[RMDB]
RNA sequence: GGGAACGACUCGAGUAGAGUCGAAAAUCAUAUCUAGCUCUCACCAUACCUGCUGUGAUGUUUGUCACAUCCACAGUAUCAGCUUCAGAAAAGUCUGUUGGAACUUUUGACAUGACAUCUUCCACCACCUCUUAUACUGUUUCGACAGUAUAAGAGGAAAAGAAACAACAACAACAAC
Reactivity to DMS in 0.01 (KOAc 150mM, MgCl2 10mM, bicine 150mM(pH8.5), 24C), signal-to-noise 5, nucleotides 027 to 126: u030c100a090u020a070u020c050u010a090g010c040u000c020u010c030a050c050c040a070u020a060c060c020u020g010c040u020g020u010g010a020u000g010u000u010u020g000u000c090a170c190a040u000c040c030a010c020a020g010u000a040u000c090a070g000c060u020u000c120a140g010a060a050a060a050g010u020c030u000g000u000u010g020g000a060a080c090u010u000u030u010g010a050c030a040u000g000a050c070a030u000c040u000u000c020c020a070c070c130a220
Reactivity to 2A3 in 0.01 (KOAc 150mM, MgCl2 10mM, bicine 150mM(pH8.5), 24C), signal-to-noise 9, nucleotides 027 to 126: u060c020a030u070a060u130c030u050a020g030c010u000c000u010c010a060c030c010a040u080a120c000c010u030g020c010u020g030u040g030a020u010g070u020u100u120g180u090c050a010c010a040u010c060c010a010c000a010g010u030a050u080c030a010g040c010u120u050c040a040g150a130a130a040a020g080u060c050u060g120u130u100g070g030a080a120c040u040u070u080u110g030a020c020a050u070g010a020c000a040u030c020u050u010c020c030a060c020c010a040